[RMDB]
Annotation: An RNA of 207 nucleotides, treated with DMS and 2A3 and read out base by base. 2A3 adducts were read by reverse transcription with SuperScript II with manganese. For 2A3, 1,097 sequencing reads were counted. For DMS the reverse transcriptase was MarathonRT. The RNA was probed in 150 mM KOAc, 10 mM MgCl2 and 150 mM bicine (pH 8.5) at 24 C.

RNA sequence: GGGAACGACUCGAGUAGAGUCGAAAAGGACCAGCACAAUCGUCGCGAGGUCGAGCGCGUCAUCGUCGAGACGGCUUUCGAGGACAGCAUCCAAGAAAUACUGGACGAGUACGACCUCAAUGUCAGCGCGAUCAUCCUGCAUGCUGGCGCUGGGCUCAACCGGAGUUUUAUUCGUAAAACUCCGGUUAAAAGAAACAACAACAACAAC
Reactivity to DMS in 0.01 (KOAc 150mM, MgCl2 10mM, bicine 150mM(pH8.5), 24C), signal-to-noise 2, nucleotides 027 to 156: g120g020a100c000c000a080g160c020a130c030a040a090u010c070g030u000c020g000c010g020a120g000g030u000c030g040a260g050c120g060c060g010u000c020a120u020c000g000u010c020g030a090g010a120c060g030g000c120u010u010u030c000g010a300g020g050a070c000a100g010c030a300u010c000c040a030a120g000a030a010a040u000a010c010u020g000g020a020c030g000a040g000u010a170c020g020a030c000c020u000c010a000a020u010g000u020c090a080g060c030g000c020g000a070u010c070a090u000c040c060u010g090c030a140u000g020c000u000g010g000c010g000c050u010g000g010g020c020u020c110
Reactivity to 2A3 in 0.01 (KOAc 150mM, MgCl2 10mM, bicine 150mM(pH8.5), 24C), signal-to-noise 2, nucleotides 027 to 156: g130g020a150c000c010a020g050c030a040c010a030a100u040c020g070u060c040g020c080g050a010g000g030u020c030g000a040g000c240g000c000g050u030c040a070u020c020g130u040c030g030a010g030a170c020g060g060c000u060u000u000c010g030a020g020g000a020c000a100g030c010a090u040c000c000a030a020g060a030a060a000u140a160c030u090g060g010a000c030g020a010g000u010a000c020g050a230c000c000u020c010a020a040u150g040u080c020a010g000c000g000c000g040a020u060c010a130u090c030c050u110g120c090a040u050g000c010u010g000g000c030g000c000u010g000g060g000c000u000c090